[RMDB]
RNA sequence: GGGAACGACUCGAGUAGAGUCGAAAAGCAUCAUCGUGAAUAUGAUUACAGCGCCUGCGAUGGCAUAUAACCGUAUUGCGGAUGGAGCGUCACGUGAGGACUGUGAAGCACAAUGCGAUAUGUUCUGCUUUUAGUGAUGUUUCGACAUCACUAAAAGAAAAGAAACAACAACAACAAC
Reactivity to DMS in 0.01 (KOAc 150mM, MgCl2 10mM, bicine 150mM(pH8.5), 24C), signal-to-noise 7, nucleotides 027 to 126: g010c030a020u000c130a020u000c020g020u000g010a120a080u020a080u000g000a110u000u000a030c030a040g000c110g010c000c000u000g000c050g010a120u010g010g000c010a040u010a090u020a100a050c020c010g020u010a100u010u020g010c030g020g000a110u010g010g010a120g010c120g010u000c010a030c050g010u010g020a050g010g000a180c020u000g020u010g000a030a060g010c030a030c120a060a070u010g000c020g010a020u010a040u000g000u000u000c040u000g010
Reactivity to 2A3 in 0.01 (KOAc 150mM, MgCl2 10mM, bicine 150mM(pH8.5), 24C), signal-to-noise 9, nucleotides 027 to 126: g010c010a010u040c000a000u010c050g020u030g090a130a030u160a040u110g040a030u020u040a010c010a010g030c050g030c190c000u010g000c010g290a300u020g020g000c030a010u080a010u030a160a060c010c010g040u050a140u170u300g050c020g010g040a070u080g100g060a090g070c040g010u010c010a000c030g020u070g280a030g000g010a010c000u000g000u020g070a070a030g030c020a010c020a040a060u070g010c010g010a010u010a020u040g050u040u030c030u050g030

The record gives the reactivity of an RNA of 177 nucleotides to DMS and 2A3. 2A3 adducts were read by reverse transcription with SuperScript II with manganese. The RNA was probed in 150 mM KOAc, 10 mM MgCl2 and 150 mM bicine (pH 8.5) at 24 C.